This 177-nucleotide RNA was probed chemically with 2A3 and DMS. For 2A3, 1,041 sequencing reads were counted. The DMS profile rests on 1,470 reads. Reactivities are rounded to 0.1 and cut off at 0 and 3. The RNA was probed in 150 mM KOAc, 10 mM MgCl2 and 150 mM bicine (pH 8.5) at 24 C.
[RMDB]
RNA sequence: GGGAACGACUCGAGUAGAGUCGAAAAGUCUCUUGUGAAAUCUAAUGGCUUAACCAUUAAACUGCUUGGGAAACUGAUAGUCUAGAGUGAGGGAGAGGCAGAUGGAAUUGGUGGUGUAGGGGUAAAACAGAUAUGUGUACUUCGGUACACAUAUCUGAAAAGAAACAACAACAACAAC
Reactivity to 2A3 in 0.01 (KOAc 150mM, MgCl2 10mM, bicine 150mM(pH8.5), 24C), signal-to-noise 2, nucleotides 027 to 126: g010u010c000u000c010u060u070g080u040g190a120a090a060u070c060u090a040a060u020g020g010c010u100u090a090a060c010c000a000u040u020a110a070a060c070u080g000c040u050u040g030g040g050a050a070a030c040u020g010a130u070a140g010u000c030u020a020g010a030g190u080g050a060g020g080g010a080g020a010g060g040c030a010g020a100u100g000g010a100a120u090u060g000g010u090g020g000u080g060u040a010g010g020g030g010u030a030a040a040a050
Reactivity to DMS in 0.01 (KOAc 150mM, MgCl2 10mM, bicine 150mM(pH8.5), 24C), signal-to-noise 2, nucleotides 027 to 126: g020u000c010u000c000u010u000g030u020g000a090a190a060u000c050u000a060a030u000g000g000c130u000u010a150a220c010c000a010u000u000a050a090a080c100u000g000c050u000u000g000g010g000a090a050a110c100u030g000a130u000a050g000u000c050u000a080g000a060g020u000g000a070g000g000g000a090g010a060g010g020c060a040g000a120u000g000g000a050a070u000u020g000g020u000g000g000u010g020u000a090g000g000g020g000u000a030a050a070a150